[RMDB]
RNA sequence: GGGAACGACUCGAGUAGAGUCGAAAAGAUCGGUCGCAGACAAGGAAAGGGGGCCUCCGUGGCCCCUUUUCUCGUGCGGCGGCCUGCAUCCGUUCAGUUGCUGAUGGAAUCGCUGCCGCACUGCUUGUGCCGAUAUUCCAUUCGUGGAAUAUCGGCAAAAAGAAACAACAACAACAAC
Reactivity to DMS in 0.01 (KOAc 150mM, MgCl2 10mM, bicine 150mM(pH8.5), 24C), signal-to-noise 2, nucleotides 027 to 126: g000a030u020c060g000g000u000c070g010c010a010g000a090c140a090a160g010g000a000a000a000g000g020g020g010g000c000c000u000c210c190g000u050g040g050c000c000c000c000u020u000u000u000c000u000c120g000u000g030c020g000g020c000g000g000c030c030u010g010c180a120u000c000c020g020u020u000c100a060g000u030u030g000c070u020g060a020u030g000g000a070a080u010c300g000c020u000g000c000c000g010c000a020c020u010g020c050u000u010g010
This 177-nucleotide RNA was probed chemically with DMS.
The RNA was probed in 150 mM KOAc, 10 mM MgCl2 and 150 mM bicine (pH 8.5) at 24 C.
DMS adducts were read by reverse transcription with MarathonRT.